This 177-nucleotide RNA was probed chemically with DMS and 2A3. Source: RMDB library OK1LIB, as collected in RNAgym. For DMS, 3,346 sequencing reads were counted. Conditions: 150 mM KOAc, 10 mM MgCl2 and 150 mM bicine (pH 8.5), 24 C. For 2A3 the reverse transcriptase was SuperScript II with manganese. For 2A3, 6,232 sequencing reads were counted.
[RMDB]
RNA sequence: GGGAACGACUCGAGUAGAGUCGAAAAACACGUGCUCCAAAAGAGCACAGAGUCGCGCAUAUAACUGGCUCGACUGAUGCGCGACAAAUCGAGCCAUGUAAAGACAGCGGGAAAACCGCUGUCGAAACGUCAUGGUCGUCUUCGGACGAUCAUGACGAAAAGAAACAACAACAACAAC
Reactivity to DMS in 0.01 (KOAc 150mM, MgCl2 10mM, bicine 150mM(pH8.5), 24C), signal-to-noise 3, nucleotides 027 to 126: a050c100a080c090g000u000g000c000u000c020c060a060a060a160a300g010a000g040c000a020c000a090g000a070g000u000c000g020c000g050c000a030u030a040u070a110a110c120u070g000g000c000u000c020g000a080c210u040g000a070u000g030c000g060c000g010a010c000a020a120a060u030c040g000a020g000c020c000a170u070g040u040a100a110a140g010a000c000a030g000c020g000g000g000a080a040a110a130c000c000g000c000u000g000u000c050g040a020a110a110
Reactivity to 2A3 in 0.01 (KOAc 150mM, MgCl2 10mM, bicine 150mM(pH8.5), 24C), signal-to-noise 5, nucleotides 027 to 126: a000c080a030c080g000u000g000c000u000c010c000a060a000a010a060g010a000g000c000a000c010a000g030a010g000u010c000g000c000g000c070a000u150a040u070a200a180c070u090g010g000c000u040c020g130a160c140u130g030a010u020g000c000g000c010g030a000c070a020a070a020u120c030g000a000g010c000c010a070u150g150u140a000a070a040g000a000c000a000g000c000g000g030g030a090a150a050a120c000c000g000c000u000g000u000c000g000a000a000a000